[RMDB]
RNA sequence: GGGAACGACUCGAGUAGAGUCGAAAAUGUUACUCGUUCGCGAGUAACAAAAUAUAUAAAGCAAAAAUAUAUAAGCAUAAAAACGUAGCAAAACGAAGCAAAAAAGGUAUUCAUUCGUGAAUACCAAACAUACCUUACCUUUCGAGGUAAGGUAUGUAAAAGAAACAACAACAACAAC
Reactivity to DMS in 0.01 (KOAc 150mM, MgCl2 10mM, bicine 150mM(pH8.5), 24C), signal-to-noise 1, nucleotides 027 to 126: u000g020u000u000a020c000u000c000g030u000u010c210g040c000g030a010g000u000a020a000c000a030a030a060a020u020a010u000a090u010a140a090a080g000c010a030a100a090a060a080u010a030u030a030u010a120a140g000c020a080u000a050a060a090a060a120c090g020u000a060g030c110a000a040a120a080c080g030a070a100g000c170a010a000a020a040a110a120g000g010u000a000u000u010c000a050u000u000c170g010u000g000a040a010u000a020c000c010a070a110
Reactivity to 2A3 in 0.01 (KOAc 150mM, MgCl2 10mM, bicine 150mM(pH8.5), 24C), signal-to-noise 1, nucleotides 027 to 126: u030g010u000u000a000c000u000c010g030u030u010c160g010c010g090a010g000u000a000a000c000a000a000a000a000u060a000u000a000u040a040a110a000g000c000a050a160a050a190a000u060a020u020a070u070a300a100g000c000a030u240a100a180a000a000a010c030g050u050a010g090c010a030a000a160a000c080g070a030a030g040c050a010a000a080a110a000a040g040g010u010a020u010u020c000a020u040u000c070g080u020g020a000a000u000a000c000c030a000a000